The record gives the reactivity of an RNA of 207 nucleotides to 2A3 and DMS. The reactions ran in a buffer of 150 mM KOAc, 10 mM MgCl2 and 150 mM bicine (pH 8.5), at 24 C. High DMS reactivity at an A or C suggests that its Watson-Crick edge is free.
RNA sequence: GGGAACGACUCGAGUAGAGUCGAAAAGGAGCUCGAGAUGUUCUUAGGUCAACUAAGGGCAUCUGUAUGUUCUAAGUUGACCUUAGGGCAUACUGUUUUUAUUACGUGUUGUAAUGAGAACACUAGGGUAUUACAACACGUAGUGCCUUAUCGAGCACGAGACGACAAUGUUCGCAUUGUCGUUUCGAAAAGAAACAACAACAACAAC
Reactivity to 2A3 in 0.01 (KOAc 150mM, MgCl2 10mM, bicine 150mM(pH8.5), 24C), signal-to-noise 8, nucleotides 027 to 156: g070g010a060g000c010u000c010g010a010g000a020u010g000u000u000c000u010u030a010g010g000u030c020a020a010c030u040a020a060g000g010g000c020a020u030c040u030g010u090a020u010g000u010u010c010u020a070a000g000u010u040g030a020c020c000u000u000a000g000g000g000c010a010u050a090c050u040g160u030u030u010u020u050a040u020u010a000c000g000u000g000u000u020g000u000a000a010u050g080a050g060a260a020c070a060c240u230a140g110g090g010u120a000u000u000a000c000a020a000c010a000c010g000u000a000g000u000g020c000c000u050u070a070u040c010g000a000g000c000a010
Reactivity to DMS in 0.01 (KOAc 150mM, MgCl2 10mM, bicine 150mM(pH8.5), 24C), signal-to-noise 5, nucleotides 027 to 156: g010g000a160g010c010u000c010g010a040g020a050u000g020u000u000c000u000u000a020g010g010u000c080a050a080c000u000a130a030g010g010g010c000a020u000c100u000g020u000a030u010g010u000u000c000u000a100a060g020u000u000g010a070c070c000u000u000a010g010g010g010c000a020u000a030c060u000g010u010u000u000u010u010a030u010u000a020c020g020u000g020u010u000g020u000a020a010u000g010a150g010a070a100c080a130c140u010a110g010g020g010u000a080u000u000a010c000a070a050c060a040c050g000u000a000g020u000g010c060c040u000u000a090u000c010g010a020g020c000a190